An RNA of 207 nucleotides, treated with 2A3 and read out base by base. The RNA was probed in 150 mM KOAc, 10 mM MgCl2 and 150 mM bicine (pH 8.5) at 24 C. Source: RMDB library OK3TST, as collected in RNAgym.
[RMDB]
RNA sequence: GGGAACGACUCGAGUAGAGUCGAAAAGAUGGCAGUGGCUCCAUGUCCUCUUCCCUCUGUCCCCAGGGCCUGGCAUAGAACUUUGUACAUCCUAGGCUCUCAGUGCAUUUUUUUUUUCUUAUAAAUGAGUGAAGGGCAGUAGGGAGCCCCGCUGAGGGGUUGGAUCUUCAUUCGUGAAGAUCCAACCAAAAGAAACAACAACAACAAC
Reactivity to 2A3 in 0.01 (KOAc 150mM, MgCl2 10mM, bicine 150mM(pH8.5), 24C), signal-to-noise 1, nucleotides 027 to 156: g080a040u130g000g010c040a040g030u050g110g010c010u000c010c050a160u050g030u010c000c000u050c040u050u000c010c040c000u000c010u020g130u110c000c020c000c010a000g040g000g000c000c000u000g000g000c030a060u050a080g100a290a150c050u230u160u300g040u120a080c020a070u010c000c000u060a000g000g030c020u010c000u000c040a090g000u080g070c000a010u000u030u000u010u000u000u030u130u180u130c070u080u300a280u050a220a050a070u070g000a020g050u040g100a140a030g000g000g000c000a000g010u170a020g020g000g020a000g000c000c000c000c050g040c140u110g030a040g040g170